[RMDB]
RNA sequence: GGGAACGACUCGAGUAGAGUCGAAAAGGAUCGUUAACCUUCAGGCCAUCGACAAUCAGAUCGCCGGAGGUGAUUUCUUCCAGUUUGUUGAUGCAGCGCAGCAGGGUCGAUUUACCGGAACCGGACAAUCCCACUGAGCUUUCGAGCUCAGUGGGAUAAAAGAAACAACAACAACAAC
Reactivity to DMS in 0.01 (KOAc 150mM, MgCl2 10mM, bicine 150mM(pH8.5), 24C), signal-to-noise 1, nucleotides 027 to 126: g000g000a020u000c060g020u000u020a200a080c020c000u000u010c030a140g100g030c020c180a020u000c010g000a120c210a100a110u010c090a180g030a020u010c300g010c000c000g010g020a030g010g060u000g000a060u010u000u010c030u020u010c020c010a190g000u000u000u000g000u010u000g000a060u030g020c030a030g010c090g010c020a040g020c060a090g000g030g010u000c020g020a090u010u000u020a080c160c000g000g000a030a100c090c020g010g000a080c170a090

This 177-nucleotide RNA was probed chemically with DMS. Conditions: 150 mM KOAc, 10 mM MgCl2 and 150 mM bicine (pH 8.5), 24 C. The DMS profile rests on 706 reads.